[RMDB]
RNA sequence: GGGAACGACUCGAGUAGAGUCGAAAAUUCUCAGCACUCAUCAAGAAGUAGGCUUAGGCCAAUUGCUUGGUGGUGAAAGUAGAGGGAAGGUAGCACUUCGACGCCUCUAAGUUCGCUGUGGGAGUAGAAAACUGGACAUCGUUCGCGAUGUCCAGAAGUAUCUUCGAUACUUCGGUAUCGAAGAUACAAAAGAAACAACAACAACAAC
Reactivity to 2A3 in 0.01 (KOAc 150mM, MgCl2 10mM, bicine 150mM(pH8.5), 24C), signal-to-noise 2, nucleotides 027 to 156: u040u000c010u000c010a030g000c000a020c040u190c020a010u020c000a030a020g000a140a030g020u120a040g030g000c020u120u070a090g100g000c030c000a100a130u080u050g040c000u000u000g000g000u000g000g000u030g020a070a050a010g090u100a000g000a030g000g070g000a040a030g040g020u030a030g050c030a020c100u030u020c050g100a080c090g060c000c000u020c010u010a050a030g070u010u060c020g010c060u020g030u140g090g010g050a020g030u160a030g140a080a110a020a040c010u010g000g000a000c000a000u010c010g020u040u050c090g040c020g140a030u000g000u000c000c000a000g000a000a000
Reactivity to DMS in 0.01 (KOAc 150mM, MgCl2 10mM, bicine 150mM(pH8.5), 24C), signal-to-noise 2, nucleotides 027 to 156: u000u010c010u000c000a160g030c000a050c030u000c000a020u000c010a020a030g010a060a060g010u000a150g040g050c010u010u000a200g070g000c010c010a050a080u000u000g020c010u020u000g030g050u000g000g000u000g010a070a050a150g010u010a060g000a100g030g050g000a110a070g020g010u000a190g020c140a250c100u000u010c040g010a090c050g010c020c000u000c030u010a050a160g020u000u010c060g040c010u010g010u000g000g000g020a160g030u000a100g010a080a110a120a220c000u000g010g010a020c000a010u000c000g030u000u010c250g040c040g040a000u020g000u000c000c030a010g000a000a080

The record gives the reactivity of an RNA of 207 nucleotides to 2A3 and DMS. Source: RMDB library M2RFPK, as collected in RNAgym. 2A3 adducts were read by reverse transcription with SuperScript II with manganese. Values are in units of 0.01, from 0 to 300, in steps of 10. DMS adducts were read by reverse transcription with MarathonRT. For 2A3, 1,642 sequencing reads were counted. In probing experiments dimethyl sulfate is read out at A N1 and C N3, which are open when not base-paired.